[RMDB]
RNA sequence: GGGAACGACUCGAGUAGAGUCGAAAAAAGGAUAUAAGGUAUGGCUCAUAUCCACUGCGACAUAGAGACGGCGUCUCUACCUACCACAUGUCGCAGUGGUCCUAUCCGCGAGGAUAGGAGGUGGUACCAUAAUGGGCUUGUUCGCAAGCCCAUUAUGAAAAGAAACAACAACAACAAC
Reactivity to 2A3 in 0.01 (KOAc 150mM, MgCl2 10mM, bicine 150mM(pH8.5), 24C), signal-to-noise 9, nucleotides 027 to 126: a000a010g180g020a100u130a030u090a150a060g030g030u030a030u080g110g000c020u020c090a070u050a060u160c000c000a000c010u000g010c000g000a000c010a010u060a010g010a000g020a010c080g230g140c150g070u000c000u000c000u030a100c000c030u100a100c030c030a050c010a080u040g000u000c000g000c000a000g000u000g000g000u010c000c000u000a000u000c000c000g010c030g010a020g000g000a000u000a010g010g000a010g020g010u040g020g010u030a030c000
Reactivity to DMS in 0.01 (KOAc 150mM, MgCl2 10mM, bicine 150mM(pH8.5), 24C), signal-to-noise 8, nucleotides 027 to 126: a080a050g010g000a100u030a040u030a070a070g000g010u000a020u000g000g000c040u010c140a110u020a060u030c000c000a010c000u000g010c000g010a010c000a060u000a010g000a020g000a030c020g010g010c200g010u000c000u000c010u000a060c140c060u010a160c040c050a090c200a080u000g000u000c000g000c000a000g010u000g000g000u000c000c000u000a000u000c000c000g000c250g000a140g000g000a010u000a000g000g000a020g000g010u000g000g010u000a040c080